Structure probing data (2A3) for a 207-nucleotide construct.

[RMDB]
RNA sequence: GGGAACGACUCGAGUAGAGUCGAAAACUGAAGGUUUCGACCUUCAGAAAAAAGAUAUGGACACCAGAACACUCGUACGAGCUGCCUUCGGAAACGAAGGGCAGCUCGCAAAUGUUCGGUGUCCUAAGUCAAAAACUCGCCGGUUCGCCGGCGAGAAGUUCUGAUAAAAGUUCGCUUUUAUCAGAACAAAAGAAACAACAACAACAAC
Reactivity to 2A3 in 0.01 (KOAc 150mM, MgCl2 10mM, bicine 150mM(pH8.5), 24C), signal-to-noise 1, nucleotides 027 to 156: c020u010g000a010a000g000g000u070u070u250c190g060a060c000c010u000u000c000a000g000a040a050a010a000a000a010g010a010u040a020u060g000g060a000c020a010c040c110a110g090a020a010c050a000c060u240c190g130u300a130c100g020a000g000c010u000g010c010c000u000u010c000g000g000a030a060a000c000g000a040a000g000g060g000c000a000g070c010u000c000g000c000a050a040a070u030g000u000u000c000g010g000u000g000u000c000c000u000a000a000g000u000c000a000a090a080a090a090c000u050c030g000c000c000g000g070u060u030c230g030c110c000g000g000c000g000a000g000a010a010
The RNA was probed in 150 mM KOAc, 10 mM MgCl2 and 150 mM bicine (pH 8.5) at 24 C.